[RMDB]
RNA sequence: GGGAACGACUCGAGUAGAGUCGAAAAGCGUACUACAGGACGUCCCAGGCUCGAAGAACUUAUGGAAGAAGGUCUCCCAAAUAGGAGACUGUAAACAUAAGGGAGAGCCUGAAGUCGUCCUGUAUCGCAAACAGGGAGGAGUUCGCUCCUCCCUGAAGUACUUGUCACGGUUCGCCGUGACAAGUACAAAAGAAACAACAACAACAAC
Reactivity to 2A3 in 0.01 (KOAc 150mM, MgCl2 10mM, bicine 150mM(pH8.5), 24C), signal-to-noise 2, nucleotides 027 to 156: g050c000g010u120a110c050u000a000c030a000g000g000a000c000g030u030c010c000c000a010g010g020c000u000c020g300a300a050g010a020a000c010u000u000a010u000g000g080a130a200g000a020a030g270g000u010c000u030c050c020c030a120a300a130u300a080g000g010a000g000a000c010u030g000u000a000a000a000c000a000u000a000a010g010g010g000a010g010a000g000c020c000u000g000a000a000g030u000c000g000u010c010c000u000g000u000a000u020c000g010c000a110a050a040c000a000g020g020g000a000g000g000a000g000u050u100c240g170c100u000c000c020u000c020c010c000u000g000a000a000
Overview
An RNA of 207 nucleotides, treated with 2A3 and read out base by base. The RNA was probed in 150 mM KOAc, 10 mM MgCl2 and 150 mM bicine (pH 8.5) at 24 C. For 2A3, 1,135 sequencing reads were counted.